[RMDB]
RNA sequence: GGGAACGACUCGAGUAGAGUCGAAAAUCUUGGUGGACGAGUAGUCGCGGUUGGGACUGAGGUGCCUACAACGUGUUUUUGAGUGGGCCUGUGUCUCUGUGUGCGCCGUGUGCGGAUAGCUUGCUAUCGGCACUAUAGUCUUCGGACUAUAGUGCCGAAAAGAAACAACAACAACAAC
Reactivity to DMS in 0.01 (KOAc 150mM, MgCl2 10mM, bicine 150mM(pH8.5), 24C), signal-to-noise 2, nucleotides 027 to 126: u010c050u000u000g010g040u000g000g010a090c070g010a080g000u010a080g000u000c060g020c020g020g010u010u010g010g010g000a070c040u000g000a080g000g010u010g040c020c000u000a040c050a070a160c230g010u010g000u000u010u020u000u000g010a270g020u000g000g000g000c010c010u010g020u000g010u000c010u000c020u000g020u000g000u010g020c100g010c020c030g000u010g020u000g010c030g000g000a080u000a040g000c050u000u000g000c070u000a100u000
Reactivity to 2A3 in 0.01 (KOAc 150mM, MgCl2 10mM, bicine 150mM(pH8.5), 24C), signal-to-noise 1, nucleotides 027 to 126: u000c010u020u060g030g000u020g050g000a050c040g000a020g050u080a010g030u080c050g010c010g090g030u090u060g020g010g000a030c040u060g120a070g050g050u160g070c010c000u010a010c020a120a020c060g070u080g130u150u190u060u100u160g110a070g000u020g020g000g000c000c040u070g040u030g000u060c000u000c020u080g050u020g040u040g100c020g010c010c010g020u020g040u060g010c020g000g000a020u030a060g060c030u070u060g010c020u010a020u100

This 177-nucleotide RNA was probed chemically with DMS and 2A3. Reactivities are given for positions 27 through 126. Conditions: 150 mM KOAc, 10 mM MgCl2 and 150 mM bicine (pH 8.5), 24 C. The 2A3 profile rests on 1,534 reads. For 2A3 the reverse transcriptase was SuperScript II with manganese.